[RMDB]
RNA sequence: GGGAACGACUCGAGUAGAGUCGAAAAAGAAAUCGACGCAAGCGAAGAUAAAAGCGGAACGGUAACCGCAAUACCGUACGGUCAUGGCACGCGAAAGCGAAACACCGAAACAUGCCAUACAAAAAAACGUGGAAGAAUAGUUCGCUAUUCUUCCACGAAAAGAAACAACAACAACAAC
Reactivity to DMS in 0.01 (KOAc 150mM, MgCl2 10mM, bicine 150mM(pH8.5), 24C), signal-to-noise 1, nucleotides 027 to 126: a000g030a080a090a040u020c040g010a120c040g000c070a100a010g050c000g000a080a200g000a220u000a040a040a030a240g000c000g010g000a050a190c020g000g000u010a000a080c010c010g000c080a030a090u000a230c020c000g030u000a150c080g000g030u020c080a000u000g000g000c040a090c030g000c050g000a080a090a150g000c030g000a110a090a020c090a000c000c010g000a090a020a020c120a030u000g030c020c030a050u000a040c240a000a000a060a030a020a000a070
Reactivity to 2A3 in 0.01 (KOAc 150mM, MgCl2 10mM, bicine 150mM(pH8.5), 24C), signal-to-noise 1, nucleotides 027 to 126: a020g080a020a110a020u040c030g050a020c030g000c080a000a100g120c000g020a040a000g050a100u120a070a210a050a010g050c000g000g000a000a020c000g010g000u030a070a040c060c000g040c120a050a040u040a020c010c020g040u020a020c010g030g000u050c050a030u020g000g000c020a010c010g000c040g030a100a000a070g000c000g030a000a090a000c110a020c030c000g100a070a020a010c030a010u070g050c030c020a030u050a100c120a060a150a040a000a000a000a020